Structure probing data (DMS) for a 177-nucleotide construct. The RNA was probed in 150 mM KOAc, 10 mM MgCl2 and 150 mM bicine (pH 8.5) at 24 C.
RNA sequence: GGGAACGACUCGAGUAGAGUCGAAAAGAUAUGGACCGUAUGCCUCACGAUGCUCUUUUGACGACGGGGUAUCGGAAACGAUAUGCACGUCGAUAAGAGCAUCGUGAGGCAUGACGGUCCUAAGUCACUAUAUAAUUUCCUUCGGGAAAUUAUAUAGAAAAGAAACAACAACAACAAC
Reactivity to DMS in 0.01 (KOAc 150mM, MgCl2 10mM, bicine 150mM(pH8.5), 24C), signal-to-noise 1, nucleotides 027 to 126: g020a060u020a300u010g000g020a000c020c000g010u000a080u010g000c030c010u040c000a040c020g000a000u000g050c000u000c000u030u000u010u000g020a170c110g010a020c000g030g000g010g020u000a000u000c010g000g000a100a070a230c030g020a020u000a000u000g010c080a090c000g030u000c000g000a110u000a010a020g010a040g000c030a000u010c000g040u000g010a010g000g040c020a010u000g010a010c000g000g000u000c000c000u000a010a070g000u000c060a280